[RMDB]
This 177-nucleotide RNA was probed chemically with 2A3 and DMS.
RNA sequence: GGGAACGACUCGAGUAGAGUCGAAAAGAUAUGGAUUCCCUCUUUUGACGCUUGUACGGUCGGAAACGACCGGUAGAGCGAUAAGACAUGGGAAUCCUAAGUCAAAAGAUCCAGUUCGCUGGAUCAAGUAAAAUAGGUUGUUCGCAACCUAUUUUACAAAAGAAACAACAACAACAAC
Reactivity to 2A3 in 0.01 (KOAc 150mM, MgCl2 10mM, bicine 150mM(pH8.5), 24C), signal-to-noise 4, nucleotides 027 to 126: g020a030u070a040u160g010g000a000u010u010c000c080c000u010c030u000u110u020u080g200a090c020g050c010u100u110g300u300a040c010g020g010u000c010g010g000a080a090a010c010g010a000c020c000g000g000u050a010g010a000g020c010g000a000u000a020a000g010a010c110a200u200g010g020g000a000a000u000c000c000u000a090a000g050u040c040a000a010a040a200g010a000u000c010c000a010g010u060u080c230g040c130u010g000g000a000u000c010a000a010
Reactivity to DMS in 0.01 (KOAc 150mM, MgCl2 10mM, bicine 150mM(pH8.5), 24C), signal-to-noise 5, nucleotides 027 to 126: g000a050u000a300u010g000g000a020u000u010c000c000c000u000c170u000u000u000u000g000a100c040g010c000u000u000g000u000a300c020g020g000u010c010g010g000a100a080a200c000g010a010c000c010g030g010u010a300g000a010g010c000g010a060u000a010a010g000a030c250a060u010g020g000g000a020a010u000c000c000u010a010a080g010u010c040a080a060a140a100g000a010u000c000c000a000g010u000u020c260g020c000u000g000g000a010u000c000a030a110
Description: For DMS the reverse transcriptase was MarathonRT.